RNA sequence: GGGAACGACUCGAGUAGAGUCGAAAAUGCCAACCAGACUCUUCACCCGCUUCGGAAAACGCCACACCACGUUCACUUCAAUCCAGAAACGUUUGAGGUUUACGAACGUUUCAGUAGCCUAUUUAGCCCUAGGUAGCACGUUCGCGUGCUACCUAGGAAAAGAAACAACAACAACAAC
Reactivity to DMS in 0.01 (KOAc 150mM, MgCl2 10mM, bicine 150mM(pH8.5), 24C), signal-to-noise 2, nucleotides 027 to 126: u000g000c060c050a120a190c000c040a020g000a040c090u030c020u010u000c110a090c000c060c000g000c050u020u040c090g000g020a070a020a130a190c040g020c030c050a020c020a010c040c060a080c090g010u000u000c020a100c050u000u050c050a120a080u000c090c000a090g010a040a020a020c020g000u010u030u020g050a210g030g000u030u040u020a170c000g000a010a000c000g020u000u000u000c000a090g030u000a020g000c080c030u020a090u020u040u060a090g040c130
Reactivity to 2A3 in 0.01 (KOAc 150mM, MgCl2 10mM, bicine 150mM(pH8.5), 24C), signal-to-noise 4, nucleotides 027 to 126: u080g040c000c000a010a010c030c010a060g020a070c040u020c000u160u050c030a070c030c000c000g010c030u000u040c030g100g050a030a160a000a000c040g010c010c000a020c000a000c030c000a020c050g040u040u060c040a030c030u050u070c030a040a110u070c040c020a020g060a050a020a000c010g000u000u010u030g170a190g110g170u140u220u140a020c040g010a010a000c000g010u010u010u010c000a020g040u030a000g010c030c010u080a080u140u160u150a050g000c000
Structure probing data (DMS and 2A3) for a 177-nucleotide construct.
Values cover nucleotides 27 to 126.
For DMS, 1,572 sequencing reads were counted.
Conditions: 150 mM KOAc, 10 mM MgCl2 and 150 mM bicine (pH 8.5), 24 C.
The 2A3 profile rests on 2,389 reads.